An RNA of 177 nucleotides, treated with 2A3 and DMS and read out base by base.
Conditions: 150 mM KOAc, 10 mM MgCl2 and 150 mM bicine (pH 8.5), 24 C.
For DMS the reverse transcriptase was MarathonRT.
RNA sequence: GGGAACGACUCGAGUAGAGUCGAAAAAAAAGCAGCUGGAAACGGACAACCAUAAUAUGCAUAAAUCUAACUCCUACCAUCGGCUACACACUGCUUGACACAUAUUGUUAGAAGCACCUCGCAUCUGUUGUAUCUCAUUGUUCGCAAUGAGAUACAAAAAAGAAACAACAACAACAAC
Reactivity to 2A3 in 0.01 (KOAc 150mM, MgCl2 10mM, bicine 150mM(pH8.5), 24C), signal-to-noise 5, nucleotides 027 to 126: a000a010a000a000g060c040a020g010c020u060g050g000a050a020a000c020g010g010a010c010a060a050c050c010a070u120a190a090u140a100u080g030c050a030u090a130a100a030u020c020u040a010a060c020u010c010c010u020a040c000c010a040u050c010g010g000c000u070a010c020a000c000a010c040u060g010c000u040u050g020a000c030a000c020a080u090a100u130u150g040u020u060a050g020a120a010g020c030a020c020c010u070c030g050c010a060u020c020u040g080
Reactivity to DMS in 0.01 (KOAc 150mM, MgCl2 10mM, bicine 150mM(pH8.5), 24C), signal-to-noise 4, nucleotides 027 to 126: a010a070a030a040g010c030a020g000c080u000g020g010a030a050a080c050g010g000a060c070a080a090c070c040a030u020a090a070u030a110u010g010c070a080u030a040a040a060u030c070u020a070a100c040u010c020c020u000a060c080c040a060u000c060g000g020c030u000a040c050a060c080a060c060u000g010c030u000u000g000a070c080a030c150a060u040a110u010u000g010u000u010a080g000a070a050g000c010a050c050c020u000c050g000c080a050u000c060u020g010